[RMDB]
RNA sequence: GGGAACGACUCGAGUAGAGUCGAAAAGACGUGGAGGUUUCGCGCCCUCCUUUGCGCGUAAGUACGUCGAAAUUCGGUGCUUAGGAUCGCACCGUUAGAUCCAUUUGAUAUCCGCUUGGUGCCGCGGUUGGGCAUUUACACUUACCCGAAAGGGGAAAUUACUAUAUCCAUUCGUGGAUAUAGUAAUAAAAGAAACAACAACAACAAC
Reactivity to 2A3 in 0.01 (KOAc 150mM, MgCl2 10mM, bicine 150mM(pH8.5), 24C), signal-to-noise 4, nucleotides 027 to 156: g020a000c020g030u060g030g100a090g060g080u020u020u110c050g010c010g010c040c010c010u120c030c050u070u080u100g010c000g000c000g020u030a000a070g030u030a040c020g000u010c030g040a030a040a060u080u050c010g000g000u000g040c030u100u200a150g100g100a120u110c040g000c000a000c010c000g000u010u020a000g010a040u020c030c010a060u050u030u140g110a090u070a070u110c030c010g010c060u050u090g060g010u050g040c050c010g020c030g040g000u100u050g020g000g010c010a010u030u030u070a030c070a010c010u060u130a030c000c000c010g060a090a030a020g000g010g000g010a050a030
Reactivity to DMS in 0.01 (KOAc 150mM, MgCl2 10mM, bicine 150mM(pH8.5), 24C), signal-to-noise 3, nucleotides 027 to 156: g000a050c040g040u000g020g000a100g020g000u000u040u000c080g010c050g000c180c030c100u020c060c030u000u000u000g010c010g000c030g030u010a120a090g010u000a040c030g010u000c040g010a080a060a130u000u000c010g020g020u010g020c000u000u000a160g030g020a130u000c140g030c020a090c010c020g020u000u000a070g000a100u000c010c010a250u010u010u010g010a110u000a100u000c020c000g020c080u010u000g020g000u010g020c010c050g010c040g000g010u010u000g010g000g050c060a060u000u000u000a070c110a070c070u000u000a180c010c010c000g010a080a100a190g000g010g000g000a020a060
An RNA of 207 nucleotides, treated with 2A3 and DMS and read out base by base. Conditions: 150 mM KOAc, 10 mM MgCl2 and 150 mM bicine (pH 8.5), 24 C. Source: RMDB library OK3TST, as collected in RNAgym. DMS (dimethyl sulfate) methylates the pairing face of unpaired adenines and cytosines.